[RMDB]
RNA sequence: GGGAACGACUCGAGUAGAGUCGAAAAGAAAAAGUCGUCGAGCCUAGGUCGUGACUGAAUACGAUCCUCUCGCUCGAAGAUACCUAGGUACGAGUAUCGGAGGAAAGUCACGAGAGACGACGAAAAAGGGAUUUAUAUGCUUCGGCAUAUAAAUCCCAAAAGAAACAACAACAACAAC
Reactivity to 2A3 in 0.01 (KOAc 150mM, MgCl2 10mM, bicine 150mM(pH8.5), 24C), signal-to-noise 2, nucleotides 027 to 126: g160a000a040a060a000a000g050u020c030g000u020c040g030a140g050c040c040u130a050g070g180u020c000g000u010g030a010c020u020g030a080a040u150a230c090g030a120u040c000c000u000c010u010c040g070c020u010c020g010a090a000g030a020u120a050c010c000u020a120g120g050u080a070c030g000a010g020u030a050u240c080g000g000a000g000g070a010a160a000g000u000c000a000c000g010a000g000a000g000a010c040g000a000c010g040a060a030a000a040a000
Reactivity to DMS in 0.01 (KOAc 150mM, MgCl2 10mM, bicine 150mM(pH8.5), 24C), signal-to-noise 1, nucleotides 027 to 126: g030a090a000a000a050a100g020u000c000g000u020c010g000a280g000c000c040u000a210g010g010u000c000g000u020g010a000c020u000g060a170a110u050a160c220g000a070u040c000c000u000c000u000c140g030c060u000c000g000a080a120g000a190u040a020c080c000u040a050g000g000u060a080c080g000a000g030u020a130u060c040g000g010a000g000g020a060a160a000g000u000c020a000c000g000a040g000a140g000a030c000g020a000c000g000a000a000a050a150a160